[RMDB]
RNA sequence: GGGAACGACUCGAGUAGAGUCGAAAAGAGUUCACGAGUACGAGAACGUACUCGAGAACGUUCGUACACGUGUGUUCGAGUGAGAGUACACACACGUGUUCACGUUCACACUCUCACUCGAUCGUGAGUGAGUGAGUUCGAUCGAUCACUCGAUCGAGCACGUUCGGUAUUUCGAUACCGAACGUGCAAAAGAAACAACAACAACAAC
Reactivity to 2A3 in 0.01 (KOAc 150mM, MgCl2 10mM, bicine 150mM(pH8.5), 24C), signal-to-noise 3, nucleotides 027 to 156: g060a010g030u080u080c110a030c050g010a000g010u010a000c060g030a080g070a300a070c060g010u010a000c000u000c030g030a010g000a010a000c010g020u090u080c040g030u040a000c010a000c000g030u010g000u000g010u070u050c090g060a110g040u180g080a120g010a000g150u160a020c020a000c010a000c020a000c140g000u000g020u040u060c050a000c020g030u020u010c040a050c000a030c050u020c010u010c020a000c000u000c000g100a260u090c080g070u190g070a000g000u010g000a020g010u040g030a040g090u060u050c010g000a030u010c000g020a020u090c060a000c130u000c020g000a000u010c000g000a010